[RMDB]
Structure probing data (DMS and 2A3) for a 177-nucleotide construct. For DMS the reverse transcriptase was MarathonRT. Values cover nucleotides 27 to 126. The reactions ran in a buffer of 150 mM KOAc, 10 mM MgCl2 and 150 mM bicine (pH 8.5), at 24 C.

RNA sequence: GGGAACGACUCGAGUAGAGUCGAAAAUGGAGCACGCUAUGCUCCAGACUUGCGGUGUCAGACCGCUGCAGUUGGCACAUUGUCAAGAAGGUAUAUGCGCCACGACCACUAACCACACCGGCUGUACAAGUGGAGGAAUAUUCGUAUUCCUCCACUUAAAAGAAACAACAACAACAAC
Reactivity to DMS in 0.01 (KOAc 150mM, MgCl2 10mM, bicine 150mM(pH8.5), 24C), signal-to-noise 7, nucleotides 027 to 126: u010g010g010a020g000c000a070c300g020c190u060a150u020g010c000u000c000c000a010g000a090c060u010u010g000c010g000g000u000g000u010c110a060g020a050c050c030g010c040u010g000c070a080g000u010u000g000g010c050a070c070a040u010u020g000u020c030a070a080g020a110a100g000g010u010a060u020a060u030g000c050g000c010c010a030c070g000a100c030c020a070c040u010a070a090c050c020a060c100a070c030c020g010g000c030u010g000u010a060c160
Reactivity to 2A3 in 0.01 (KOAc 150mM, MgCl2 10mM, bicine 150mM(pH8.5), 24C), signal-to-noise 9, nucleotides 027 to 126: u050g000g010a000g010c010a020c140g170c210u230a100u260g000c010u000c000c010a000g010a020c020u040u100g000c000g050g010u050g070u140c060a050g050a100c010c040g010c020u020g010c010a040g030u090u070g030g020c030a020c020a090u100u120g060u110c040a080a080g060a090a030g190g020u070a110u030a020u210g040c030g010c010c000a010c010g020a010c000c020a030c030u050a060a050c020c000a030c010a010c030c020g040g000c020u040g020u110a040c030